[RMDB]
RNA sequence: GGGAACGACUCGAGUAGAGUCGAAAAUUUAGAUGGAAACAAAGAAUACGCUUUAGCUGCUUAGUUCAGCUACACCUUGGAUAACUUAUUCUAUACGAGUUUUUCAAAGGUGUUGACUAGUAUAGAUUACCGUAAAUGAUUUCUCUAAGUUUAUGGGCAUACGACUACAGUUCGCUGUAGUCGUAUGAAAAGAAACAACAACAACAAC
Reactivity to 2A3 in 0.01 (KOAc 150mM, MgCl2 10mM, bicine 150mM(pH8.5), 24C), signal-to-noise 3, nucleotides 027 to 156: u110u080u100a090g040a100u110g040g020a070a090a060c050a080a170a050g110a140a100u110a120c080g030c060u100u100u020a040g000c010u020g000c070u230u200a040g030u190u180c000a000g000c000u010a020c000a000c000c000u000u000g000g020a010u010a020a000c010u010u030a060u230u110c100u180a080u060a130c070g020a000g000u010u000u000u000u020c080a110a070a060g000g000u010g010u000u000g010a010c040u010a010g060u050a040u030a090g100a050u070u160a030c000c020g010u010a000a010a000u040g020a020u010u050u010c000u000c000u010a060a010g000u000u000u020a010u010g010g000g000
Reactivity to DMS in 0.01 (KOAc 150mM, MgCl2 10mM, bicine 150mM(pH8.5), 24C), signal-to-noise 2, nucleotides 027 to 156: u010u010u000a090g040a180u000g000g000a100a070a190c040a100a140a160g010a180a140u010a070c070g020c110u000u000u010a100g030c020u000g000c030u000u000a120g010u020u010c040a060g010c020u000a040c020a010c030c000u010u000g000g020a030u000a010a040c020u000u000a060u010u000c140u000a190u000a070c040g000a020g000u000u000u000u020u000c000a020a030a060g010g020u000g030u000u010g010a060c030u000a130g010u000a080u000a100g000a150u010u000a060c040c010g060u010a010a030a050u000g010a210u000u010u000c010u000c010u000a100a300g010u000u010u000a030u000g020g030g000